RNA sequence: GGGAACGACUCGAGUAGAGUCGAAAAGAACGCCAAGAGGCGAGACCGAGACCGAAAAUCACGCUAGCUCGGAAAAGUGGAAUAGCGUCAGGAGUCCACUCUCGGAAAAGCCGAAAGAACGGCAGAAAAAUGCCUGCCAUUUCGAUGGCAGGCAUUUAAAAGAAACAACAACAACAAC
Reactivity to DMS in 0.01 (KOAc 150mM, MgCl2 10mM, bicine 150mM(pH8.5), 24C), signal-to-noise 1, nucleotides 027 to 126: g070a160a080c090g010c010c000a180a190g000a200g010g000c000g000a070g000a240c000c000g000a040g000a260c000c110g020a000a040a160a050u100c250a100c070g040c080u000a070g010c090u000c020g000g000a090a000a050a080g000u000g030g000a050a150u090a000g000c070g090u000c140a020g000g010a240g000u000c050c020a010c130u000c000u030c000g030g020a000a060a070a170g000c000c000g000a030a030a090g000a100a090c140g000g000c040a060g000a000a040
Reactivity to 2A3 in 0.01 (KOAc 150mM, MgCl2 10mM, bicine 150mM(pH8.5), 24C), signal-to-noise 1, nucleotides 027 to 126: g000a090a120c100g000c130c030a180a010g210a230g090g000c020g010a000g010a000c000c000g000a000g000a000c000c000g000a070a000a000a080u140c000a000c000g000c010u070a070g040c100u020c000g130g000a130a170a000a000g010u050g000g000a030a060u000a040g110c030g140u060c050a130g060g060a000g050u000c040c000a020c030u000c000u070c000g030g000a030a030a030a030g080c050c040g040a070a070a000g150a110a110c080g000g020c040a040g070a000a100

Structure probing data (DMS and 2A3) for a 177-nucleotide construct. The data come from the RNA Mapping Database (RMDB), library OK1LIB. In probing experiments dimethyl sulfate is read out at A N1 and C N3, which are open when not base-paired. The 2A3 profile rests on 574 reads.